[RMDB]
RNA sequence: GGGAACGACUCGAGUAGAGUCGAAAAAUUGCAGGCUCGUUCACAAGGGCAGACGGAACUAGAGCGAGUUGUUGCAUUUGUAGCACUCGUAAUGAUGCUAUUUGAUUGCGAGAGAAGCGACUGCGUGGAUCAUGAAUAGUUUCGACUAUUCAUGAUCAAAAGAAACAACAACAACAAC
Reactivity to 2A3 in 0.01 (KOAc 150mM, MgCl2 10mM, bicine 150mM(pH8.5), 24C), signal-to-noise 9, nucleotides 027 to 126: a000u090u070g000c010a000g000g010c010u000c010g010u030u010c040a060c050a150a080g050g020g000c040a030g070a070c090g090g050a050a020c030u060a070g000a010g030c010g000a010g010u030u040g140u080u040g020c010a030u060u030u180g040u030a010g010c010a010c040u000c000g020u030a050a040u090g130a020u050g040c100u140a190u110u070u090g120a050u020u050g010c010g000a010g000a010g020a100a020g020c020g020a020c020u070g010c040g110u100g130
Reactivity to DMS in 0.01 (KOAc 150mM, MgCl2 10mM, bicine 150mM(pH8.5), 24C), signal-to-noise 9, nucleotides 027 to 126: a050u000u000g020c010a070g000g000c010u000c010g010u000u000c020a110c210a120a080g000g010g030c040a090g010a140c150g010g010a100a070c070u000a080g000a050g000c010g000a020g010u000u000g010u010u000g010c010a090u000u000u000g010u000a050g010c020a100c080u000c020g010u000a050a060u010g000a070u000g010c160u000a050u010u000u000g000a060u000u000g010c020g000a060g000a090g010a110a110g000c050g000a080c030u000g000c100g010u010g010